An RNA of 207 nucleotides, treated with DMS and 2A3 and read out base by base. Source: RMDB library OK3TST, as collected in RNAgym. For DMS, 4,266 sequencing reads were counted.
RNA sequence: GGGAACGACUCGAGUAGAGUCGAAAAUUGACUAAUGUAUUAAGCACAAAUCGGCUGCUAUCCCUUCAUUACCGAUAUCCUAAGUACUGUGUUAUGUAGAUACCGAUGCUGAAAAAUUACGUAAACCAAAAUAACAAUAUUUAAUCAUAGAUGGCGAGGAUUUAGUAAUGUUCGCAUUACUAAAUCCAAAAGAAACAACAACAACAAC
Reactivity to DMS in 0.01 (KOAc 150mM, MgCl2 10mM, bicine 150mM(pH8.5), 24C), signal-to-noise 2, nucleotides 027 to 156: u000u000g000a160c060u000a080a070u020g000u010a160u010u010a100a140g010c020a100c050a060a110a080u020c070g020g080c020u010g020c020u000a050u000c000c030c060u000u000c050a100u000u000a020c010c020g000a050u000a030u000c050c030u010a070a110g020u000a020c070u000g010u010g040u020u010a050u000g030u000a060g000a110u010a030c040c030g010a050u020g000c070u000g020a030a040a070a110a110u000u010a040c060g000u010a050a070a100c020c010a020a050a060a080u000a050a100c020a050a100u010a090u000u000u000a050a080u000c030a090u010a100g020a120u000g020g010c050g000a190
Reactivity to 2A3 in 0.01 (KOAc 150mM, MgCl2 10mM, bicine 150mM(pH8.5), 24C), signal-to-noise 5, nucleotides 027 to 156: u040u070g030a000c030u070a050a120u090g070u110a100u210u090a110a020g040c040a020c030a050a100a090u110c070g000g000c020u020g000c000u010a040u080c010c000c000u030u040c080a080u050u070a030c010c020g020a030u030a070u130c020c050u080a160a030g040u040a090c050u060g020u000g020u190u060a040u080g020u010a020g020a070u040a080c010c040g020a020u040g010c030u020g040a010a030a020a110a110u090u090a040c040g030u050a030a010a040c020c010a030a100a020a060u210a100a010c020a010a050u160a060u180u170u220a100a030u110c020a010u060a130g080a070u090g050g010c050g050a050